RNA sequence: GGGAACGACUCGAGUAGAGUCGAAAACAAAGGUACUUUAGUCAUGCCGGGCUUAGCUAGAGUAAUCAGACAUGCUGUUCCAACUUGGUGUGCUGACUCCCCAGAGAUUCUGUGGGUAACUGAUAAAGGAUAGAGCCUAAUUCGUUAGGCUCUAUCCAAAAGAAACAACAACAACAAC
Reactivity to 2A3 in 0.01 (KOAc 150mM, MgCl2 10mM, bicine 150mM(pH8.5), 24C), signal-to-noise 2, nucleotides 027 to 126: c050a030a100a020g140g000u080a050c000u010u090u110a050g050u100c060a020u030g030c070c070g150g010g000c050u060u060a030g030c000u030a020g000a010g050u100a110a100u080c010a010g130a130c020a080u050g000c010u010g020u190u030c030c020a020a020c050u030u080g000g000u030g000u030g040c020u020g000a050c020u030c010c020c000c010a020g020a000g050a210u190u100c030u060g020u220g000g000g000u010a090a000c040u030g060a080u140a130a090a070
Reactivity to DMS in 0.01 (KOAc 150mM, MgCl2 10mM, bicine 150mM(pH8.5), 24C), signal-to-noise 3, nucleotides 027 to 126: c100a050a130a130g020g010u000a040c040u000u000u000a030g010u010c040a080u010g030c030c050g050g010g010c060u000u000a110g030c010u000a070g000a050g020u000a080a110u010c060a040g000a090c060a030u000g010c020u000g010u000u000c070c120a040a080c090u000u010g030g000u010g020u000g030c020u000g000a080c190u000c000c030c000c020a100g010a110g020a110u000u000c030u000g020u000g010g000g000u010a040a090c090u000g030a100u000a050a080a110